[RMDB]
An RNA of 177 nucleotides, treated with DMS and 2A3 and read out base by base. Reactivities are given for positions 27 through 126. The reactions ran in a buffer of 150 mM KOAc, 10 mM MgCl2 and 150 mM bicine (pH 8.5), at 24 C. For DMS the reverse transcriptase was MarathonRT. For 2A3 the reverse transcriptase was SuperScript II with manganese. The 2A3 profile rests on 3,077 reads.

RNA sequence: GGGAACGACUCGAGUAGAGUCGAAAAGAAGAGAAAGAAAGCUGGCAAAAUGCCGAAUGAGGGCAUCUAAAGAAGGUGCAUCGGUAAAAACCGUCGGUAAUCUCAUAAAUAUGCCAGCAAAAGAAAAGAUGAGUAAUACCUUCGGGUAUUACUCAUCAAAAGAAACAACAACAACAAC
Reactivity to DMS in 0.01 (KOAc 150mM, MgCl2 10mM, bicine 150mM(pH8.5), 24C), signal-to-noise 2, nucleotides 027 to 126: g010a090a110g040a200g010a150a050a170g010a080a160a140g000c010u000g000g010c020a050a080a190a130u030g040c030c040g050a060a020u000g000a020g000g020g000c000a010u000c000u000a110a120a150g020a110a030g000g000u000g030c000a000u000c000g010g000u000a070a030a050a040a150c000c010g000u000c000g000g000u030a030a070u030c000u000c000a030u010a050a030a080u010a070u000g000c020c070a000g010c000a000a010a050a090g000a110a070a100a100
Reactivity to 2A3 in 0.01 (KOAc 150mM, MgCl2 10mM, bicine 150mM(pH8.5), 24C), signal-to-noise 3, nucleotides 027 to 126: g030a040a010g110a000g110a110a110a030g120a050a070a030g000c000u000g000g000c010a040a010a020a170u180g030c000c030g010a020a010u050g010a030g020g000g000c000a000u000c000u050a150a230a170g220a100a020g070g010u000g000c010a040u040c000g000g000u040a100a060a010a040a070c000c000g020u010c000g000g030u070a090a100u030c020u000c020a010u040a050a150a020u150a050u060g000c000c010a000g000c010a020a010a000a040g020a010a120a000a010